Structure probing data (DMS) for a 177-nucleotide construct. The RNA was probed in 150 mM KOAc, 10 mM MgCl2 and 150 mM bicine (pH 8.5) at 24 C. It was measured as part of the RMDB library OK2TRN. Values cover nucleotides 27 to 126.
RNA sequence: GGGAACGACUCGAGUAGAGUCGAAAAUGUUGAAGUGGUCAGGCCCGCCGAUUUCUUUACCGAACAGAUUGAUGAAAAACGUCAGGAUGUGGUGGCGAACUUUAACGGUCUGAGCGUUAUUGCCAACUCGUUUUACUAGCUUCGGCUAGUAAAACGAAAAAGAAACAACAACAACAAC
Reactivity to DMS in 0.01 (KOAc 150mM, MgCl2 10mM, bicine 150mM(pH8.5), 24C), signal-to-noise 2, nucleotides 027 to 126: u010g020u000u000g030a100a100g030u000g000g000u000c070a020g010g020c030c000c040g000c300c190g010a050u020u000u000c000u000u010u000a050c010c060g000a100a090c040a010g000a300u010u000g000a010u000g000a130a100a090a100a150c110g010u010c020a000g020g000a220u000g000u010g010g010u000g000g000c120g000a020a010c120u000u000u000a060a270c260g020g030u020c020u010g010a050g000c000g020u010u010a080u000u000g000c070c020a070a130c100